The data come from the RNA Mapping Database (RMDB), library M2PK90.
Structure probing data (DMS and 2A3) for a 177-nucleotide construct.
For DMS, 1,214 sequencing reads were counted.
DMS adducts were read by reverse transcription with MarathonRT.
Values are in units of 0.01, from 0 to 300, in steps of 10.
The 2A3 profile rests on 1,878 reads.
The RNA was probed in 150 mM KOAc, 10 mM MgCl2 and 150 mM bicine (pH 8.5) at 24 C.
Reactivities are given for positions 27 through 126.
RNA sequence: GGGAACGACUCGAGUAGAGUCGAAAAUAAAACACGUAACGUGAGCACAGUCGGUAGUGCAGCAGGACCGAAACCUGCAGCGAAAGGGAUCAAGACCCUGUUCGCGCAAAAACCGAAGAAUAAAAAAGUUUCGUAUUAUCUUCGGAUAAUACGAAACAAAAGAAACAACAACAACAAC
Reactivity to DMS in 0.01 (KOAc 150mM, MgCl2 10mM, bicine 150mM(pH8.5), 24C), signal-to-noise 2, nucleotides 027 to 126: u010a040a060a090a200c000a010c020g020u000a120a100c090g010u000g000a200g020c010a010c020a010g000u000c010g000g000u000a020g020u000g000c000a120g050c000a000g030g010a040c050c050g010a100a090a090c000c020u000g020c000a150g000c020g000a020a100a000g000g000g020a120u000c280a040a240g000a200c040c000c000u000g010u000u000c000g000c000g020c110a030a000a020a030a020c010c010g030a030a150g010a080a060u000a040a050a100a020a110a100
Reactivity to 2A3 in 0.01 (KOAc 150mM, MgCl2 10mM, bicine 150mM(pH8.5), 24C), signal-to-noise 2, nucleotides 027 to 126: u100a010a060a040a010c050a040c030g150u210a300a000c110g010u050g050a050g000c010a000c010a030g000u030c020g000g000u030a010g000u020g040c080a020g000c000a000g020g010a070c080c060g000a030a010a010c000c000u000g000c000a010g000c000g000a000a000a010g070g000g010a030u260c130a110a030g190a160c000c010c010u040g280u040u020c000g000c000g000c010a000a000a000a000a110c010c040g010a030a030g110a030a090u300a030a110a020a000a000a040